[RMDB]
RNA sequence: GGGAACGACUCGAGUAGAGUCGAAAAGCGUACGCGAUCGUAUGGCGCACAGCGCUACAGGCGCGCGCGGAUCAGUACGAGUCGGUACGGUACACUGCGCGAUCACACGUACAGUACGCGCGCGAUCACAGUUCAUCGCUUUCGAGCGAUGAACUGUAAAAGAAACAACAACAACAAC
Reactivity to DMS in 0.01 (KOAc 150mM, MgCl2 10mM, bicine 150mM(pH8.5), 24C), signal-to-noise 1, nucleotides 027 to 126: g000c000g050u000a020c170g030c050g000a120u000c000g000u000a190u010g010g030c020g000c010a080c100a190g010c000g000c010u000a060c140a080g000g010c010g000c030g000c030g000c000g020g030a100u000c090a240g020u000a010c010g020a040g000u000c100g000g000u000a020c020g050g010u020a040c210a140c210u000g000c020g000c050g000a050u000c080a040c150a170c010g000u000a060c090a060g000u000a140c060g010c000g000c000g040c040g000a020u000c100
Reactivity to 2A3 in 0.01 (KOAc 150mM, MgCl2 10mM, bicine 150mM(pH8.5), 24C), signal-to-noise 1, nucleotides 027 to 126: g050c040g020u060a050c120g000c000g160a020u050c020g070u120a100u190g150g000c010g020c030a070c030a140g010c000g000c000u090a110c030a160g150g000c000g040c000g000c000g000c000g020g050a180u080c030a000g000u050a000c020g030a000g130u040c090g010g000u040a070c060g000g060u140a100c220a050c080u090g000c070g040c080g000a080u150c050a040c010a010c070g030u090a050c010a000g020u020a010c020g020c030g010c020g020c010g030a030u100c060